[RMDB]
Chemical mapping of a 207-nucleotide RNA with 2A3. The reactions ran in a buffer of 150 mM KOAc, 10 mM MgCl2 and 150 mM bicine (pH 8.5), at 24 C.
RNA sequence: GGGAACGACUCGAGUAGAGUCGAAAAGGUGCGAUCUUCAAUUUGGAGGAAAAGCUGACUAACAUUGAACAUCAACACAGACUUCAUCUGAUAAGAAACAUUCAUGAUCUACUCUCUAUGAAGCCUGCUACCUGGAGACUACAGGAAGGAUGGCUGAAUCGAUCCUACCUUUCGAGGUAGGAUCGAUAAAAGAAACAACAACAACAAC
Reactivity to 2A3 in 0.01 (KOAc 150mM, MgCl2 10mM, bicine 150mM(pH8.5), 24C), signal-to-noise 2, nucleotides 027 to 156: g040g010u070g010c020g090a090u070c030u020u080c120a220a290u060u050u220g030g000a060g000g000a000a120a010a230g050c140u050g070a060c010u070a110a010c030a110u030u210g100a100a050c070a080u070c070a040a100c070a000c020a090g070a030c010u030u040c050a170u030c040u040g030a070u100a130a060g050a070a130a040c030a060u110u130c010a010u150g020a030u000c020u000a050c000u030c000u010c000u080a000u220g100a000a000g000c000c030u090g000c020u060a070c000c000u010g040g000a060g020a070c070u150a100c110a000g050g000a000a060g020g010a100u070g010g000c000u000g040a030
Reactivities are given for positions 27 through 156. Source: RMDB library OK3TST, as collected in RNAgym.